[RMDB]
An RNA of 177 nucleotides, treated with 2A3 and DMS and read out base by base. 2A3 adducts were read by reverse transcription with SuperScript II with manganese. The data come from the RNA Mapping Database (RMDB), library TTRINS. For DMS, 4,690 sequencing reads were counted. Conditions: 150 mM KOAc, 10 mM MgCl2 and 150 mM bicine (pH 8.5), 24 C. Reactivities are given for positions 27 through 126. In probing experiments dimethyl sulfate is read out at A N1 and C N3, which are open when not base-paired.
RNA sequence: GGGAACGACUCGAGUAGAGUCGAAAAGAUAUGGAGCACCUCCCCACCAGUAGCGACAUACAGCUAAGACAGCGACUCGGAAACGAGUCGUCGAGCUGCGUGUCGCUACUGAGGGUGCUCCUAAGUCCAGUAUAUCAGACUUCGGUCUGAUAUACUGAAAAGAAACAACAACAACAAC
Reactivity to 2A3 in 0.01 (KOAc 150mM, MgCl2 10mM, bicine 150mM(pH8.5), 24C), signal-to-noise 3, nucleotides 027 to 126: g110a070u300a250u300g000g000a000g010c010a020c010c000u120c100c050c010c010a030c010c000a000g010u010a010g000c000g020a000c000a000u050a010c000a000g000c020u130a280a060g130a090c090a070g040c030g050a000c000u000c000g040g010a040a110a070c020g000a010g000u020c000g020u040c010g040a000g000c000u010g000c020g010u010g010u000c000g000c000u000a000c000u000g010a000g010g010g000u000g010c000u000c000c000u000a010a010g050u040c050
Reactivity to DMS in 0.01 (KOAc 150mM, MgCl2 10mM, bicine 150mM(pH8.5), 24C), signal-to-noise 5, nucleotides 027 to 126: g010a130u010a150u000g000g020a000g020c010a020c000c010u010c140c030c010c060a300c090c000a020g020u000a000g010c010g000a020c010a020u000a100c010a000g020c010u010a240a140g000a080c300a100g010c030g000a010c000u000c000g000g000a170a100a130c000g010a010g000u010c010g010u000c000g010a010g020c000u000g010c010g030u000g010u000c000g000c000u000a000c000u000g000a090g030g010g020u000g000c010u000c000c000u000a010a090g000u010c090